[RMDB]
RNA sequence: GGGAACGACUCGAGUAGAGUCGAAAACUGCGCGUUUGGUAGGAGGGUUGGUGAUGGUCCGGAUUUCUUAUAUUUAGAGAUGAGUUUUGCUGGGUUAGGGUGGUCGUGGAUACCUUGGGAGCGCGUGCUAUAUAAAAAUAUUCGUAUUUUUAUAUAGAAAAGAAACAACAACAACAAC
Reactivity to DMS in 0.01 (KOAc 150mM, MgCl2 10mM, bicine 150mM(pH8.5), 24C), signal-to-noise 1, nucleotides 027 to 126: c060u000g000c050g010c040g000u000u020u000g000g020u020a060g000g010a120g010g010g010u010u020g000g030u000g020a080u010g010g010u000c020c030g020g020a050u000u010u020c010u000u010a090u030a090u050u010u030a080g000a100g000a050u000g000a080g000u010u020u010u010g000c030u000g010g000g020u010u030a090g010g010g030u020g020g000u010c080g010u010g010g000a120u010a040c020c030u000u030g000g020g010a060g000c050g000c010g020u000g010